[RMDB]
RNA sequence: GGGAACGACUCGAGUAGAGUCGAAAAAGCUCUCCUAACAGCAUAACUAACAACUGUUUUCGUCCUUAAACCAACGAUAACAGCUGUUAGGCCAUGUUUUGUAACGGCUGUUAGGAGCGCUGUUAAGCUCAGAGCAACCUUUCGAGGUUGCUCUGAGAAAAGAAACAACAACAACAAC
Reactivity to DMS in 0.01 (KOAc 150mM, MgCl2 10mM, bicine 150mM(pH8.5), 24C), signal-to-noise 3, nucleotides 027 to 126: a020g000c000u010c000u000c000c000u020a020a020c000a000g010c000a140u010a130a110c000u000a010a000c000a000a050c000u000g010u000u000u000u000c010g010u020c120c110u000u030a050a100a140c300c300a210a010c020g010a000u000a000a020c000a000g020c040u000g030u000u010a000g020g010c130c150a030u060g010u010u000u010u020g020u040a120a030c100g030g000c000u000g040u000u000a000g000g000a000g010c080g000c000u000g010u000u000a060a050g030
Reactivity to 2A3 in 0.01 (KOAc 150mM, MgCl2 10mM, bicine 150mM(pH8.5), 24C), signal-to-noise 4, nucleotides 027 to 126: a000g000c000u010c010u000c000c000u000a000a000c000a000g020c010a050u050a230a070c000u000a000a000c000a010a000c000u000g010u000u000u020u000c010g010u040c030c050u190u300a050a070a050c050c040a030a010c010g000a000u010a010a000c000a000g000c010u000g000u000u000a000g030g000c010c020a140u150g110u050u090u110u140g200u090a060a040c090g030g000c000u000g000u000u000a000g000g000a010g000c000g000c000u000g020u010u070a060a010g030
Chemical mapping of a 177-nucleotide RNA with DMS and 2A3. The data come from the RNA Mapping Database (RMDB), libraries RFM100 and RFMREP. DMS adducts were read by reverse transcription with MarathonRT.